[RMDB]
RNA sequence: GGGAACGACUCGAGUAGAGUCGAAAAUCUUGUACAGCCUGCAGAACUGUUAGCCAAGUAAAACUCUUUACUUUAUAAAUUACCCAGCCUCAGGUAUUUCUUUAUAGCAAUGCAAAUAGACUAAAAGUCAUUACUAAUACUUCGGUAUUAGUAAUGAAAAAGAAACAACAACAACAAC
Reactivity to 2A3 in 0.01 (KOAc 150mM, MgCl2 10mM, bicine 150mM(pH8.5), 24C), signal-to-noise 1, nucleotides 027 to 126: u000c000u000u070g020u140a120c010a040g000c000c000u000g040c000a020g040a100a100c010u000g040u070u070a020g000c030c040a020a020g000u030a020a020a110a080c020u030c000u150u060u020a040c020u160u180u060a190u110a200a300a050u020u080a070c000c000c060a000g000c020c000u070c000a030g010g000u060a040u030u090u000c060u090u110u010a190u130a040g030c020a010a000u060g010c010a020a050a160u110a110g070a040c030u070a060a080a000a060g040
Reactivity to DMS in 0.01 (KOAc 150mM, MgCl2 10mM, bicine 150mM(pH8.5), 24C), signal-to-noise 2, nucleotides 027 to 126: u020c030u000u000g020u000a070c050a070g010c030c010u010g000c060a070g010a060a080c050u000g040u010u000a080g010c110c100a030a090g020u010a060a040a080a130c110u000c060u000u010u010a060c020u020u000u010a170u000a110a050a090u000u000a100c040c010c030a070g030c040c020u000c110a040g010g010u000a000u010u000u000c050u000u000u000a040u000a080g000c030a060a080u000g000c080a010a050a100u020a110g010a100c090u000a030a040a070a100g000